This 207-nucleotide RNA was probed chemically with 2A3.
The reactions ran in a buffer of 150 mM KOAc, 10 mM MgCl2 and 150 mM bicine (pH 8.5), at 24 C.
The data come from the RNA Mapping Database (RMDB), library RNAMAK.
The 2A3 profile rests on 1,484 reads.

[RMDB]
RNA sequence: GGGAACGACUCGAGUAGAGUCGAAAACCAGGCGGUAUUCGUACCGCCUGGAAAAAGAUAUGGAUUCCACAAGGGAGCUCGUGGUCGGAAACGACCACAAGAGCGACGAUCUUGGGAAUCCUAAGUCAAAAAACGGAAUGGGUUCGCCCAUUCCGAAGAUACAGCGUACUUUCGAGUACGCUGUAUCAAAAGAAACAACAACAACAAC
Reactivity to 2A3 in 0.01 (KOAc 150mM, MgCl2 10mM, bicine 150mM(pH8.5), 24C), signal-to-noise 1, nucleotides 027 to 156: c010c000a000g000g000c000g000g000u040a060u060u130c280g040u040a020c010c000g030c000c000u000g000g000a010a010a010a010a010g000a000u000a010u010g000g000a010u000u020c000c000a070c020a220a000g050g000g000a010g000c000u000c020g010u000g010g020u000c020g020g000a000a010a000c010g000a010c000c010a000c000a040a110g000a000g000c010g090a040c010g010a000u010c010u020u010g000g000g000a000a000u000c000c000u000a010a000g000u000c000a000a000a000a220a040a000c020g000g000a010a000u010g010g000g050u070u090c220g070c010c000c000a000u000u020c000c000g000a030a010